The record gives the reactivity of an RNA of 177 nucleotides to DMS and 2A3. The 2A3 profile rests on 5,423 reads. Values are in units of 0.01, from 0 to 300, in steps of 10. The data come from the RNA Mapping Database (RMDB), library OK2TST. The reactions ran in a buffer of 150 mM KOAc, 10 mM MgCl2 and 150 mM bicine (pH 8.5), at 24 C. Values cover nucleotides 27 to 126. For DMS, 6,335 sequencing reads were counted.

[RMDB]
RNA sequence: GGGAACGACUCGAGUAGAGUCGAAAACUGCUGGCGUCUCACUCAAUACUCAAAUGGUGUUGUCUUGGAUGCUGACACCAUUCUCAUCAGAAACUCCGACGAACCGAUUUCUUUUUUUUUAGGACCAUCGUAAUAAAUUAUUCGUAAUUUAUUACGAAAAAGAAACAACAACAACAAC
Reactivity to DMS in 0.01 (KOAc 150mM, MgCl2 10mM, bicine 150mM(pH8.5), 24C), signal-to-noise 5, nucleotides 027 to 126: c080u000g010c030u000g010g010c050g020u000c010u010c060a060c040u000c050a060a080u000a070c080u000c080a090a080a060u000g000g020u000g010u000u010g010u010c030u000u000g010g010a100u000g010c040u000g010a020c030a030c040c040a040u000u000c050u000c070a070u010c070a080g010a120a100a100c060u000c030c020g010a090c070g000a080a100c080c050g010a050u000u000u000c000u000u000u000u000u000u010u000u010u000a090g000g000a140c070c040a110
Reactivity to 2A3 in 0.01 (KOAc 150mM, MgCl2 10mM, bicine 150mM(pH8.5), 24C), signal-to-noise 4, nucleotides 027 to 126: c020u040g000c040u020g040g020c010g050u010c010u010c040a030c010u050c000a050a110u040a120c030u060c110a050a080a120u110g040g000u010g010u020u050g030u010c040u050u110g240g030a200u080g040c010u020g010a000c000a000c010c000a000u040u010c030u020c030a130u020c020a020g100a060a080a040c020u040c060c010g040a050c040g020a050a030c050c010g030a070u030u060u060c020u140u060u050u050u030u030u010u050u090a060g020g030a020c100c010a040